[RMDB]
RNA sequence: GGGAACGACUCGAGUAGAGUCGAAAAUAAGUCUUCUUCGGAAGACUUAAAAUAAGCUGACCAAGCUAUGAGGUCAAUAACGUCAUGCACAAUAGAAUAAAAAGCCGAAAAGGUUCGCCUUUUCGAAUCACUUGAGUGAAUUCGUUCACUCAAGUGAAAAAGAAACAACAACAACAAC
Reactivity to 2A3 in 0.01 (KOAc 150mM, MgCl2 10mM, bicine 150mM(pH8.5), 24C), signal-to-noise 1, nucleotides 027 to 126: u040a010a000g010u010c000u000u000c000u000u040c210g090g000a010a000g000a000c000u000u020a010a010a010a010u150a110a020g070c050u020g000a010c000c000a010a050g080c050u110a080u080g070a040g000g000u050c070a030a270u090a100a050c040g110u040c020a020u080g030c020a020c020a080a210u100a100g110a070a020u100a180a140a050a090a000g260c110c010g000a000a020a000a000g040g000u020u000c020g070c000c000u000u010u000u000c010g020a000a020
Reactivity to DMS in 0.01 (KOAc 150mM, MgCl2 10mM, bicine 150mM(pH8.5), 24C), signal-to-noise 2, nucleotides 027 to 126: u000a020a020g030u000c010u000u000c000u000u000c210g020g000a010a020g000a000c010u000u020a010a060a170a050u020a070a140g040c170u000g000a080c000c020a060a150g040c040u030a040u010g000a100g000g020u020c010a070a030u010a060a090c170g010u000c020a040u000g000c030a090c220a070a090u000a020g020a150a180u000a060a070a160a120a170g000c120c000g000a010a010a010a030g000g010u000u010c250g010c020c010u000u000u000u000c000g020a090a080
The data come from the RNA Mapping Database (RMDB), library M2PK50. Chemical mapping of a 177-nucleotide RNA with 2A3 and DMS. For 2A3, 1,104 sequencing reads were counted. The DMS profile rests on 834 reads. Conditions: 150 mM KOAc, 10 mM MgCl2 and 150 mM bicine (pH 8.5), 24 C.